RNA sequence: GGGAACGACUCGAGUAGAGUCGAAAAGAUAUGGAACACAUUCUCGCAUAAUGCCGAGUCGGAAACGAUAUCAUUAUGAACUACGAGGUGUGUUCCUAAGUCAAACUCUCGCGUUCGCGCGAGAGAAUCCUACACGUCUGUUCGCAGACGUGUAGGAAAAAGAAACAACAACAACAAC
Reactivity to DMS in 0.01 (KOAc 150mM, MgCl2 10mM, bicine 150mM(pH8.5), 24C), signal-to-noise 2, nucleotides 027 to 126: g000a010u000a250u000g000g020a020a020c000a020c010a030u010u010c000u010c010g020c010a000u000a020a000u000g010c300c150g000a150g000u000c000g000g020a070a040a100c010g010a020u000a070u000c000a020u010u000a020u010g020a070a070c160u020a300c020g000a000g000g020u020g020u000g010u000u000c000c000u000a010a080g010u010c040a100a130a140c010u000c000u010c000g070c040g020u000u020c170g000c020g040c000g030a020g000a010g000a020a070
Reactivity to 2A3 in 0.01 (KOAc 150mM, MgCl2 10mM, bicine 150mM(pH8.5), 24C), signal-to-noise 1, nucleotides 027 to 126: g010a010u050a010u080g000g010a000a000c000a000c000a030u300u270c020u010c020g090c030a020u000a040a000u010g180c190c290g220a120g280u010c010g000g070a050a030a000c020g030a020u010a040u300c030a020u030u040a010u030g080a190a160c130u140a060c300g000a010g020g000u000g020u000g010u000u000c000c000u000a030a000g010u000c000a000a040a200c000u000c000u000c010g000c030g020u030u070c300g000c000g000c010g040a010g000a000g000a000a020